[RMDB]
RNA sequence: GGGAACGACUCGAGUAGAGUCGAAAAGAUAUGGAUCUAUCACAUACCGACGAAGAACUCGGAAACGAGGGAGUCGAUGUGAGUAGAUCCUAAGUCAAAUCUCGUGUAUGUUCGCAUACACGAGAAAGUAUACGAGUAUCUUCGGAUACUCGUAUACAAAAGAAACAACAACAACAAC
Reactivity to DMS in 0.01 (KOAc 150mM, MgCl2 10mM, bicine 150mM(pH8.5), 24C), signal-to-noise 6, nucleotides 027 to 126: g000a040u000a300u010g010g010a010u000c000u000a020u000c000a040c000a030u000a090c230c010g020a020c000g020a130a150g020a100a170c010u000c000g000g000a130a100a170c010g010a020g000g010g010a070g010u000c010g010a020u000g000u000g000a130g010u010a000g000a020u000c000c000u000a020a060g000u000c040a110a120a140u000c000u000c000g030u000g000u000a000u000g000u000u010c210g010c000a000u000a000c000a000c000g010a000g000a000a010a060
Reactivity to 2A3 in 0.01 (KOAc 150mM, MgCl2 10mM, bicine 150mM(pH8.5), 24C), signal-to-noise 6, nucleotides 027 to 126: g040a030u080a050u140g010g000a000u000c000u000a010u040c010a010c010a020u160a280c120c070g010a010c000g210a300a100g020a080a020c000u000c000g030g040a100a040a040c010g000a010g010g000g010a010g000u000c000g000a010u010g020u000g010a050g040u020a000g000a000u000c000c000u010a060a010g040u010c050a100a030a140u000c000u000c000g000u010g000u000a000u000g040u030u070c290g000c150a000u000a010c000a000c000g000a000g000a000a010a000